About this RNA
This 207-nucleotide RNA was probed chemically with 2A3. For 2A3 the reverse transcriptase was SuperScript II with manganese. Reactivities are given for positions 27 through 156. The reactions ran in a buffer of 150 mM KOAc, 10 mM MgCl2 and 150 mM bicine (pH 8.5), at 24 C.

RNA sequence: GGGAACGACUCGAGUAGAGUCGAAAAUUAUGAUACAAAGAUGUUUAAUGAUACGAUACUAGAUUUUAUCUCUAGCGAGAUGUCGUCAGAAUCAUUUAUCAUAACUAUGUUUAAUAAUAAUUCAUCAACGAAUAUCGAUAACAUGUGUCAUUUAUACGCACUCAUAUCUGUUCGCAGAUAUGAGUGCAAAAGAAACAACAACAACAAC
Reactivity to 2A3 in 0.01 (KOAc 150mM, MgCl2 10mM, bicine 150mM(pH8.5), 24C), signal-to-noise 2, nucleotides 027 to 156: u060u010a020u080g010a000u040a080c040a020a170a060g110a050u070g070u070u130u170a040a010u000g040a010u020a060c040g000a010u010a130c010u040a070g000a080u120u070u120u170a120u080c010u010c000u030a040g070c020g120a020g030a120u090g060u070c060g020u040c080a020g070a040a040u010c020a020u010u060u140a010u030c010a020u080a140a080c020u080a090u150g000u000u050u010a090a090u110a020a010u040a080a060u100u000c020a050u080c100a230a000c100g000a010a010u080a020u130c080g080a050u040a150a030c060a040u030g010u000g010u020c010a010u000u070u130a150u020a040c110